RNA sequence: GGGAACGACUCGAGUAGAGUCGAAAAGGGCCAGCCAUGCCGCCCUGCAUGGGAAAGUGUUCAGGUGGGACGAUCCGAUCUGGCAGCACAUCACCCCGCCCAAUGGCUACAACUGCCGGUGCCGGAUCGUUGCCUUGACGGUGGCCGCUGUCCGCCGGUCUAGACACGAGUUCGCUCGUGUCUAGACAAAAGAAACAACAACAACAAC
Reactivity to 2A3 in 0.01 (KOAc 150mM, MgCl2 10mM, bicine 150mM(pH8.5), 24C), signal-to-noise 1, nucleotides 027 to 156: g050g010g010c010c000a000g070c000c000a060u110g040c060c040g120c080c000c000u030g040c050a050u060g000g000g070a090a300a120g140u130g050u020u020c020a000g020g050u050g060g090g000a000c000g000a000u000c000c000g030a000u020c010u000g030g000c010a000g090c040a060c000a070u170c090a160c020c030c010c010g020c020c040c010a100a120u260g000g000c010u070a050c030a210a040c020u000g010c000c010g040g010u070g120c110c000g000g000a020u000c000g000u000u010g030c000c020u020u060g050a010c020g040g000u060g030g000c000c020g070c080u060g030u020c010c000g000c020c020g110
An RNA of 207 nucleotides, treated with 2A3 and read out base by base. Conditions: 150 mM KOAc, 10 mM MgCl2 and 150 mM bicine (pH 8.5), 24 C. 2A3 adducts were read by reverse transcription with SuperScript II with manganese.